RNA sequence: GGGAACGACUCGAGUAGAGUCGAAAAAUAAAAUGUGCGUCCCUCCCGAAGCUGCGCGCUCGGUCGAAGAGGACGACCAUCGCGGAUAGAGGACGACCGGUCUUCGGUCAAGGGAAAAAGAAAAAAACUCUUAGAUCAGUUUCGACUGAUCUAAGAGAAAAGAAACAACAACAACAAC
Reactivity to DMS in 0.01 (KOAc 150mM, MgCl2 10mM, bicine 150mM(pH8.5), 24C), signal-to-noise 1, nucleotides 027 to 126: a060u000a090a010a040a060u000g010u000g040c060g000u000c000c000c010u000c050c010c000g000a090a070g020c070u000g010c050g010c070g000c040u000c040g000g000u010c180g000a110a130g000a170g030g010a090c030g000a010c000c030a050u010c080g010c050g000g000a090u000a050g010a090g000g000a090c170g000a070c030c040g000g000u010c120u000u010c000g010g020u010c020a020a180g010g010g000a060a040a050a130a060g030a000a000a070a070a080a060a090
Reactivity to 2A3 in 0.01 (KOAc 150mM, MgCl2 10mM, bicine 150mM(pH8.5), 24C), signal-to-noise 1, nucleotides 027 to 126: a000u150a020a090a020a050u080g060u080g070c000g010u000c030c000c000u010c020c000c010g060a130a020g000c020u050g070c080g010c010g000c120u030c060g000g050u010c020g040a120a040g020a130g080g030a030c010g000a020c000c000a020u030c000g000c050g000g020a070u090a120g070a050g030g030a020c110g000a010c050c000g040g040u140c050u210u240c050g000g010u010c010a010a030g060g000g040a000a020a030a100a090g050a040a060a020a060a070a000a000

Chemical mapping of a 177-nucleotide RNA with DMS and 2A3. The 2A3 profile rests on 892 reads. DMS adducts were read by reverse transcription with MarathonRT. The reactions ran in a buffer of 150 mM KOAc, 10 mM MgCl2 and 150 mM bicine (pH 8.5), at 24 C.